[RMDB]
RNA sequence: GGGAACGACUCGAGUAGAGUCGAAAAGAUAUGGAUCUGUGUAUCAGCUUUGAUCUAUCACUUCGGAAACGAAGUAUAGGGAGCUGUGGCACAGAUCCUAAGUCAAACUGAAGUCUUCGGACUUCAGGUCUCUGAAGCAGUUCGCUGCUUCAGAGACAAAAGAAACAACAACAACAAC
Reactivity to 2A3 in 0.01 (KOAc 150mM, MgCl2 10mM, bicine 150mM(pH8.5), 24C), signal-to-noise 2, nucleotides 027 to 126: g010a000u090a050u130g020g000a010u000c010u010g020u000g010u090a010u190c000a010g020c030u300u290u110g090a060u100c010u000a010u060c140a010c070u030u000c020g030g050a110a140a100c010g000a000a020g000u020a010u010a000g030g040g010a020g050c010u070g060u120g250g000c020a020c000a000g010a000u000c000c010u000a010a000g030u000c020a070a090a180c020u010g000a000a000g000u010c010u040u160c300g110g020a000c000u000u020c020a000g000
Reactivity to DMS in 0.01 (KOAc 150mM, MgCl2 10mM, bicine 150mM(pH8.5), 24C), signal-to-noise 1, nucleotides 027 to 126: g030a020u000a300u010g000g010a020u010c020u000g050u000g030u010a270u010c010a020g000c000u010u000u000g010a060u010c000u000a010u000c230a010c000u000u000c010g020g020a060a120a300c000g030a010a000g000u000a010u000a030g010g000g000a010g050c020u000g010u000g050g020c000a010c000a030g000a020u000c000c000u000a000a150g010u000c040a090a090a300c000u000g000a020a010g000u010c000u000u000c200g000g010a010c000u000u000c000a010g030

Conditions: 150 mM KOAc, 10 mM MgCl2 and 150 mM bicine (pH 8.5), 24 C. Chemical mapping of a 177-nucleotide RNA with 2A3 and DMS.